[RMDB]
RNA sequence: GGGAACGACUCGAGUAGAGUCGAAAAUGCAGUUUUUGCUAAUGCUGGUUUUAUUGUAUUUGCUCUUGAUCCUACUGGAUCUACAGGUUAUGGACAACGUUUUACCGAUUCCAUUGCUCUUGAUUGACAGUGCCACUAAUUUCGAUUAGUGGCACUGAAAAGAAACAACAACAACAAC
Reactivity to 2A3 in 0.01 (KOAc 150mM, MgCl2 10mM, bicine 150mM(pH8.5), 24C), signal-to-noise 2, nucleotides 027 to 126: u090g000c020a010g100u030u060u130u230u120g040c020u060a120a040u150g060c090u110g070g050u080u040u030u080a080u110u030g070u020a060u040u020u050g030c040u010c010u080u090g010a040u040c000c020u040a250c110u100g000g020a040u030c010u010a030c000a030g050g000u050u050a010u050g020g000a010c020a060a030c080g020u060u080u140u230a050c090c010g020a020u000u080c000c020a010u000u050g010c010u040c030u110u040g040a070u040u000g000a020
Reactivity to DMS in 0.01 (KOAc 150mM, MgCl2 10mM, bicine 150mM(pH8.5), 24C), signal-to-noise 4, nucleotides 027 to 126: u010g020c030a050g010u000u000u020u000u000g020c040u000a080a110u000g010c030u000g000g010u010u010u000u010a040u010u010g000u000a060u000u000u000g010c080u000c070u000u010g000a050u000c010c000u000a130c240u010g030g000a030u000c040u000a070c180a080g010g010u000u010a050u010g010g000a050c100a040a090c130g010u000u010u010u010a070c170c020g000a200u000u000c010c030a020u000u000g000c040u000c060u000u000g000a120u010u010g000a270